[RMDB]
RNA sequence: GGGAACGACUCGAGUAGAGUCGAAAAUAACACUGGCGGCUGCGUAUCACUCUAGGGUACGUGAUAGUGCGAUAUAAGAAGCACUGGUACAAGCCGGCAGGGACAGUUAAGAGAUGGCCGCAGUCUCAAAAGGGGUCAUUCUUCGGAAUGACCCCAACUUCAUCCCAAUCUUCGGAUUGGGAUGAAGAAAAGAAACAACAACAACAAC
Reactivity to 2A3 in 0.01 (KOAc 150mM, MgCl2 10mM, bicine 150mM(pH8.5), 24C), signal-to-noise 2, nucleotides 027 to 156: u070a020a030c050a010c060u020g150g000c000g000g000c000u010g020c000g050u010a000u000c040a030c180u230c140u170a090g050g050g050u000a000c000g020u050g070a070u100a050g000u000g000c030g060a040u060a010u070a300a090g100a070a010g030c000a000c020u020g050g000u150a070c030a010a000g000c000c000g060g000c000a000g000g030g000a010c060a050g000u050u140a130a030g000a000g020a010u040g060g100c000c010g100c020a000g030u000c000u000c030a010a080a050a030g000g000g000g000u000c000a000u010u000c010u020u050c140g090g000a010a000u000g000a000c000c000c000c000a000a000
Reactivity to DMS in 0.01 (KOAc 150mM, MgCl2 10mM, bicine 150mM(pH8.5), 24C), signal-to-noise 1, nucleotides 027 to 156: u010a090a040c000a030c010u000g000g000c000g030g050c000u000g010c050g000u000a000u000c020a130c140u000c300u030a100g000g010g010u000a020c020g030u000g020a150u000a030g000u000g020c000g000a140u000a200u000a060a280g040a170a260g010c020a030c010u000g010g020u020a100c140a150a110g010c000c060g010g040c010a000g010g070g020a140c040a110g010u000u000a100a080g000a140g020a060u010g070g020c020c060g000c040a290g050u000c000u020c020a030a070a190a170g000g020g010g000u000c000a000u000u000c000u000u010c300g020g000a100a030u000g010a030c000c000c000c000a000a000